[RMDB]
RNA sequence: GGGAACGACUCGAGUAGAGUCGAAAACCCAGAGUGCUGGGAUUAUAGGCAUGAGCCACUGCUCUGGGCCAACUGUGCUUUUUGAAGGCAGGAAUAACUGGUUCAUUUCUGGGUGUCCCAGGGAGCCGACCAAUCUCAUAUUCGUAUGAGAUUGGUCAAAAGAAACAACAACAACAAC
Reactivity to DMS in 0.01 (KOAc 150mM, MgCl2 10mM, bicine 150mM(pH8.5), 24C), signal-to-noise 4, nucleotides 027 to 126: c000c000c000a070g010a070g020u000g000c050u000g000g020g000a150u000u000a080u010a090g010g020c040a100u000g010a070g000c000c100a070c100u000g000c010u000c010u010g000g000g000c030c030a090a140c150u010g020u000g030c020u010u000u010u020u010g010a090a080g020g010c020a090g000g010a120a070u000a070a090c260u000g010g000u000u000c030a010u000u000u000c010u000g010g000g000u000g000u000c000c000c000a140g010g000g000a090g010c150c120
Reactivity to 2A3 in 0.01 (KOAc 150mM, MgCl2 10mM, bicine 150mM(pH8.5), 24C), signal-to-noise 4, nucleotides 027 to 126: c000c000c000a000g030a010g020u150g050c010u020g030g050g080a170u110u120a100u240a150g020g000c040a030u070g010a010g030c000c060a170c090u110g010c010u000c030u050g040g060g040c000c000a120a120c100u150g080u230g130c000u140u180u100u130u300g190a100a050g050g030c020a000g040g100a090a110u180a170a050c060u060g010g010u040u030c010a030u060u170u010c010u020g050g000g060u100g020u020c000c010c000a000g030g020g020a030g080c050c090